[RMDB]
RNA sequence: GGGAACGACUCGAGUAGAGUCGAAAAUACGUUAAACUACCCAUACAACUAACCGACAUGGGACACGCUCCUUCAUACCGGGAGCGCUGUGCUGGCUGGCUCCACAGCGAUGGUUGGGAUGAAGGUAAGGCUAAGGUGGGUUCGCCCACCUUAGCCUAAAAGAAACAACAACAACAAC
Reactivity to 2A3 in 0.01 (KOAc 150mM, MgCl2 10mM, bicine 150mM(pH8.5), 24C), signal-to-noise 1, nucleotides 027 to 126: u110a000c060g010u040u250a000a050a030c040u050a050c000c000c000a000u130a140c080a060a060c060u040a050a000c000c000g000a050c010a140u300g000g000g000a000c000a000c000g000c000u010c000c000u070u100c030a000u120a080c000c000g030g000g000a010g040c000g000c000u000g000u000g020c000u000g020g000c000u000g020g020c000u020c020c010a150c020a000g000c000g020a090u070g060g050u180u030g020g000g060a010u100g020a030a040g000g020u060a030
Reactivity to DMS in 0.01 (KOAc 150mM, MgCl2 10mM, bicine 150mM(pH8.5), 24C), signal-to-noise 1, nucleotides 027 to 126: u050a110c130g050u040u000a170a090a210c120u000a010c000c020c000a120u110a240c040a130a100c040u000a040a080c070c030g000a050c170a050u180g000g000g000a130c040a050c030g000c040u000c000c000u000u030c080a190u120a090c300c190g000g000g000a010g000c000g030c050u080g100u000g000c000u000g000g000c030u000g090g000c000u000c100c090a000c000a000g000c000g020a100u080g000g000u000u010g010g120g000a100u080g000a180a190g000g000u000a090

An RNA of 177 nucleotides, treated with 2A3 and DMS and read out base by base. 2A3 adducts were read by reverse transcription with SuperScript II with manganese. The reactions ran in a buffer of 150 mM KOAc, 10 mM MgCl2 and 150 mM bicine (pH 8.5), at 24 C.